This 177-nucleotide RNA was probed chemically with 2A3 and DMS.
For 2A3 the reverse transcriptase was SuperScript II with manganese.
As a SHAPE reagent, 2A3 marks flexible, mostly unpaired nucleotides at the ribose 2'-OH.
Source: RMDB libraries RFM100 and RFMREP, as collected in RNAgym.
Values are in units of 0.01, from 0 to 300, in steps of 10.
Conditions: 150 mM KOAc, 10 mM MgCl2 and 150 mM bicine (pH 8.5), 24 C.
[RMDB]
RNA sequence: GGGAACGACUCGAGUAGAGUCGAAAAUAUGGAGCCAUCACUUUCUUAUGAUGUCAAUUUCCGGUCGACAGAUCUCAGAGCGAGAUACAGUGACCAGGAGUUCACUCUGCCUUGAGCUUCCGUCAGGUAGUACGAAAGCAUUCGUGCUUUCGUACUAAAAAGAAACAACAACAACAAC
Reactivity to 2A3 in 0.01 (KOAc 150mM, MgCl2 10mM, bicine 150mM(pH8.5), 24C), signal-to-noise 9, nucleotides 027 to 126: u300a100u120g110g030a020g040c020c000a020u030c010a030c050u120u260u160c030u130u260a070u100g020a010u030g040u050c030a040a070u060u100u000c000c000g010g010u000c020g080a030c020a050g080a040u000c000u000c010a150g040a090g260c070g060a000g010a010u090a130c040a030g030u010g050a000c010c010a030g010g000a010g000u010u010c000a000c000u020c000u010g040c020c040u010u070g020a010g010c000u020u000c010c010g080u050c020a020g010g140
Reactivity to DMS in 0.01 (KOAc 150mM, MgCl2 10mM, bicine 150mM(pH8.5), 24C), signal-to-noise 6, nucleotides 027 to 126: u020a130u020g010g010a270g020c120c000a010u000c030a030c190u010u010u030c160u020u010a170u020g000a020u000g000u010c060a060a070u010u000u000c000c010g000g010u000c000g010a110c210a120g000a050u000c000u000c010a160g030a150g030c260g000a020g000a030u000a050c090a100g020u010g020a010c010c020a070g030g000a060g010u000u000c020a020c000u000c000u000g020c080c040u010u010g000a030g000c030u000u000c000c010g010u010c070a060g000g010